[RMDB]
RNA sequence: GGGAACGACUCGAGUAGAGUCGAAAACAAGGAGCAGGAGAGUUUCCAACGGGAGAAAGGUCAAUAGUGUCAGAGGUCACAUAAGACGAGGUUCUAUUAGAAAUUGCAACAAAGAGGUCACUGGCAACCGUAAUAAAGAUUUCGAUCUUUAUUACGGAAAAGAAACAACAACAACAAC
Reactivity to DMS in 0.01 (KOAc 150mM, MgCl2 10mM, bicine 150mM(pH8.5), 24C), signal-to-noise 8, nucleotides 027 to 126: c090a110a100g010g010a070g020c060a040g010g010a090g010a120g010u000u000u000c030c050a110a110c160g010g010g000a050g010a060a080a070g000g000u000c060a040a080u000a080g020u000g010u000c040a060g000a060g010g000u000c050a040c110a080u000a070a080g010a060c050g000a070g000g010u000u010c060u010a090u000u010a080g000a030a060a090u000u000g010c050a050a050c120a040a060a090g010a060g010g000u000c040a050c050u000g010g010c110a080a160
Reactivity to 2A3 in 0.01 (KOAc 150mM, MgCl2 10mM, bicine 150mM(pH8.5), 24C), signal-to-noise 7, nucleotides 027 to 126: c030a020a050g060g000a020g030c020a020g020g040a040g010a020g040u030u090u020c030c020a060a030c060g030g040g000a040g050a050a070a030g050g010u020c030a040a080u070a120g040u020g010u030c010a010g040a020g080g030u030c010a020c010a070u120a060a040g020a010c030g020a030g010g020u070u030c030u070a150u130u070a050g040a030a090a030u110u110g010c030a040a050c010a040a160a060g070a030g040g000u030c010a010c060u040g030g000c030a040a040